Chemical mapping of a 207-nucleotide RNA with 2A3 and DMS. DMS adducts were read by reverse transcription with MarathonRT. It was measured as part of the RMDB library OK3TST.

RNA sequence: GGGAACGACUCGAGUAGAGUCGAAAACUCGCCAAUAUGGUGAAUCACCAUCUCUACUAAAAAUACAUAAAUUAGCUGGGCAUGGUGGUGCGCGCCUACUCCCAGCUAUCGGGAGGCUGAGGCUGGAGAAUCACUAGAAUCAGGGAGGUGGAGGUUACAUAAAUCGUCCAUUCGUGGACGAUUUAUGAAAAGAAACAACAACAACAAC
Reactivity to 2A3 in 0.01 (KOAc 150mM, MgCl2 10mM, bicine 150mM(pH8.5), 24C), signal-to-noise 4, nucleotides 027 to 156: c010u010c010g030c010c020a090a110u140a090u210g010g020u000g030a060a050u050c020a030c020c020a030u020c030u030c010u070a100c020u080a080a030a030a070a070u190a060c080a100u230a130a170a100u120u020a030g020c040u030g020g000g000c050a030u050g020g000u010g030g040u060g040c100g000c000g000c000c000u020a040c030u050c000c020c000a000g000c030u030a070u090c010g030g000g010a020g040g000c060u060g060a020g020g000c020u030g020g020a050g010a050a040u080c020a010c080u020a060g040a040a040u070c020a040g000g000g040a020g020g000u020g020g020a010g020g020u040u060a000
Reactivity to DMS in 0.01 (KOAc 150mM, MgCl2 10mM, bicine 150mM(pH8.5), 24C), signal-to-noise 2, nucleotides 027 to 156: c050u000c030g020c000c010a110a140u000a040u020g010g030u000g000a040a100u020c020a050c020c010a030u000c000u010c010u000a100c010u010a040a030a050a120a100u020a140c080a090u020a100a060a170u000u000a010g030c000u010g010g000g030c200a110u000g020g060u000g010g020u000g000c070g040c050g000c020c010u000a080c070u000c000c010c010a070g000c080u000a010u010c030g010g000g040a050g000g020c060u000g010a070g000g020c020u020g010g010a100g010a080a080u010c050a080c040u010a100g000a090a120u000c070a120g000g000g020a070g040g020u000g000g020a060g000g030u000u000a080